Chemical mapping of a 170-nucleotide RNA with DMS and 2A3.
The reactions ran in a buffer of 150 mM KOAc, 10 mM MgCl2 and 150 mM bicine (pH 8.5), at 24 C.

RNA sequence: GGGAACGACUCGAGUAGAGUCGAAAAUUUUGUGUGCACAGACAACUCUGCUAACACUAAAGUUCUUAGGAACAAGGGUGUUGAUUAUACUAAGAAGUUUCUUACAGUUGACGGUGUGCAAUAUUAUGGACGUUCUGCUUCGGCAGAACGAAAAGAAACAACAACAACAAC
Reactivity to DMS in 0.01 (KOAc 150mM, MgCl2 10mM, bicine 150mM(pH8.5), 24C), signal-to-noise 3, nucleotides 027 to 129: u000u000u000u000g030u020g050u050g040c000a040c000a000g050a110c120a060a020c000u010c150u050g030c090u000a050a000c030a040c000u040a000a050a080g010u030u020c010u010u090a120g090g000a030a050c030a030a150g050g000g020u020g030u030u040g030a100u020u040a090u100a040c000u040a050a120g000a080a180g010u000u030u000c000u010u030a040c300a050g030u060u000g020a070c060g030g040u050g020u010g050c030a030a050u070a070u020u090a050u030g000g000a240
Reactivity to 2A3 in 0.01 (KOAc 150mM, MgCl2 10mM, bicine 150mM(pH8.5), 24C), signal-to-noise 4, nucleotides 027 to 129: u070u070u190u120g030u010g010u030g000c010a040c000a010g110a090c000a060a000c010u040c030u040g070c110u100a030a000c000a010c010u170a130a000a000g000u000u000c070u080u140a080g100g000a000a000c030a020a020g200g000g020u030g010u020u000g030a060u050u130a120u100a120c090u060a040a010g040a120a030g120u090u090u050c020u040u060a090c020a030g000u000u000g030a020c030g020g000u020g000u000g020c020a010a000u100a060u130u030a050u070g130g030a000
The DMS profile rests on 9,177 reads.